[RMDB]
RNA sequence: GGGAACGACUCGAGUAGAGUCGAAAAGGUGCCUUACCUAGACGAGGACGGGAUUCUGCGAGCUUACGGCAGAAUUGAUGCCGCACUGUGCAUCCCGUACAGUGCGAGGAGGCCCGUAUUACUGUCAGCACCAUCCACUAUUCGUAGUGGAUGGUGCAAAAGAAACAACAACAACAAC
Reactivity to DMS in 0.01 (KOAc 150mM, MgCl2 10mM, bicine 150mM(pH8.5), 24C), signal-to-noise 2, nucleotides 027 to 126: g010g030u000g010c070c090u020u000a070c050c050u000a160g010a050c080g010a170g000g010a070c010g000g010g000a080u000u000c020u000g010c000g000a140g010c240u000u020a040c190g000g010c000a000g030a040a050u030u000g030a150u010g010c050c000g010c020a030c000u000g030u010g000c020a120u000c070c070c060g000u000a020c000a010g000u000g000c020g030a050g020g000a120g000g020c000c000c000g000u000a060u000u000a100c070u020g000u000c060a170
Reactivity to 2A3 in 0.01 (KOAc 150mM, MgCl2 10mM, bicine 150mM(pH8.5), 24C), signal-to-noise 2, nucleotides 027 to 126: g040g040u110g040c000c040u060u150a080c020c010u030a060g010a090c010g100a050g080g000a020c020g000g050g000a020u010u010c000u010g000c010g070a110g090c120u160u180a050c070g050g000c030a000g040a050a030u030u060g050a040u100g080c020c000g000c000a010c000u010g000u010g030c020a060u050c080c020c000g000u000a000c000a000g010u030g040c020g000a040g020g050a030g020g040c000c000c000g000u030a080u090u160a100c050u060g030u060c040a030